Conditions: 150 mM KOAc, 10 mM MgCl2 and 150 mM bicine (pH 8.5), 24 C. Structure probing data (2A3) for a 177-nucleotide construct. Values cover nucleotides 27 to 126. 2A3 adducts were read by reverse transcription with SuperScript II with manganese. Source: RMDB library OK1LIB, as collected in RNAgym.
RNA sequence: GGGAACGACUCGAGUAGAGUCGAAAACACAACAAUUGAAGAAUUUUGAUGCAGUAAUUGAUGUAACAAUAAUCUCGUACCGGUACCAGUAUGCCGAAUUCACUCAGCCAUACACAUGACUAGCAAACAUCUGCAUGCUCUUCGGAGCAUGCAGAUGAAAAGAAACAACAACAACAAC
Reactivity to 2A3 in 0.01 (KOAc 150mM, MgCl2 10mM, bicine 150mM(pH8.5), 24C), signal-to-noise 3, nucleotides 027 to 126: c070a000c040a080a050c030a060a160u070u210g060a210a080g080a120a180u170u150u000u110g120a140u030g000c000a000g060u090a000a250u090u130g080a120u030g120u160a040a060c010a020a020u130a030a080u040c020u060c160g000u060a060c000c000g010g000u010a030c000c000a070g130u120a080u050g010c010c050g000a050a050u100u100c010a060c000u000c000a030g000c030c000a110u120a100c080a000c010a010u050g010a080c000u010a000g020c010a020a000a000